[RMDB]
RNA sequence: GGGAACGACUCGAGUAGAGUCGAAAAUGAUACUUCGGUAUCACUCAUGGGGUCUGUGCGUGGGACAUGCUGUUAUGGCUGAAGCCUCCACGGCCAUGGCAGCAACAGCCGUAACAUCGCACAGACGGAGGCACCCGUCAUGGCAAUUCGUUGCCAACACGUAGCUGAUUUUCGAAUCAGCUACGUGAAAAGAAACAACAACAACAAC
Reactivity to 2A3 in 0.01 (KOAc 150mM, MgCl2 10mM, bicine 150mM(pH8.5), 24C), signal-to-noise 3, nucleotides 027 to 156: u140g010a000u000a000c000u020u090c280g100g000u000a010u010c020a020c030u180c030a160u260g160g010g050g000u010c000u020g000u000g000c000g030u030g090g000g140a100c090a250u300g020c000u000g000u040u010a000u000g000g000c010u000g010a090a010g000c000c000u000c000c020a030c010g000g000c000c000a000u010g000g000c010a020g030c010a030a040c030a010g220c060c090g010u020a020a020c000a040u180c020g000c000a000c000a010g000a000c000g000g000a010g000g000c000a010c010c020c000g040u100c080a200u130g010g030c000a000a040u090u090c240g090u100u040g000c000c020a010a030
This 207-nucleotide RNA was probed chemically with 2A3. Reactivities are given for positions 27 through 156. The RNA was probed in 150 mM KOAc, 10 mM MgCl2 and 150 mM bicine (pH 8.5) at 24 C.